Chemical mapping of a 177-nucleotide RNA with DMS.
[RMDB]
RNA sequence: GGGAACGACUCGAGUAGAGUCGAAAAAAUAAGAGUUUGGAUUAACCUAUAGGGAAUUAGCGAUCAACAAUACAACCUAAGGACCUGGUUGACUUAAUUAUUCCAUAGGUUGGUGGAAGCUAGCGAAUUGACCUCAUUAUUUCGAUAAUGAGGUCAAAAAAGAAACAACAACAACAAC
Reactivity to DMS in 0.01 (KOAc 150mM, MgCl2 10mM, bicine 150mM(pH8.5), 24C), signal-to-noise 3, nucleotides 027 to 126: a120a070u010a050a060g000a040g010u000u000u010g020g020a090u000u000a030a020c010c000u000a040u000a170g010g020g010a040a040u000u010a030g000c090g000a070u000c030a020a090c090a070a100u000a100c080a040a100c070c050u010a060a110g000g010a100c300c160u000g020g020u000u000g000a050c040u000u000a010a030u010u000a020u000u000c000c000a060u000a000g000g020u000u000g000g000u000g010g010a050a080g000c060u010a040g020c120g010a080a120